Overview: This 177-nucleotide RNA was probed chemically with 2A3 and DMS. For 2A3, 1,525 sequencing reads were counted. Values cover nucleotides 27 to 126. Conditions: 150 mM KOAc, 10 mM MgCl2 and 150 mM bicine (pH 8.5), 24 C.

[RMDB]
RNA sequence: GGGAACGACUCGAGUAGAGUCGAAAACCGAACUGCGUGGUGUGUUCGGGGAUGCGGUGGCGUUGUUGCCGUCCUGGGAGACACUGCCGCACGAACGGCUCUCACCCGGUGUUGACACCGUCGGCACCUCACCGUAGCCGUUCGCGGCUACGGUGAGAAAAGAAACAACAACAACAAC
Reactivity to 2A3 in 0.01 (KOAc 150mM, MgCl2 10mM, bicine 150mM(pH8.5), 24C), signal-to-noise 2, nucleotides 027 to 126: c010c000g000a070a040c060u090g010c040g100u080g010g060u050g000u000g040u100u040c040g010g020g030g050a080u190g040c000g020g000u030g060g000c110g080u090u140g080u080u060g220c010c010g030u160c000c050u070g110g000g000a090g040a010c010a000c060u050g010c050c030g000c010a040c050g010a100a050c010g000g010c040u000c000u030c000a070c000c010c010g000g020u040g000u000u110g080a100c120a100c210c110g040u040c020g000g000c010a020c010
Reactivity to DMS in 0.01 (KOAc 150mM, MgCl2 10mM, bicine 150mM(pH8.5), 24C), signal-to-noise 2, nucleotides 027 to 126: c000c010g020a080a130c100u000g040c090g000u020g000g000u010g020u000g000u000u000c030g000g000g030g010a070u020g030c020g000g000u000g030g000c040g000u020u010g020u010u000g010c020c010g030u010c050c070u000g000g000g000a120g050a030c010a030c030u000g000c050c000g010c020a070c050g000a070a140c010g010g010c040u000c170u010c100a120c060c050c090g010g010u000g020u000u000g000a050c030a090c140c180g010u000c030g010g020c020a040c040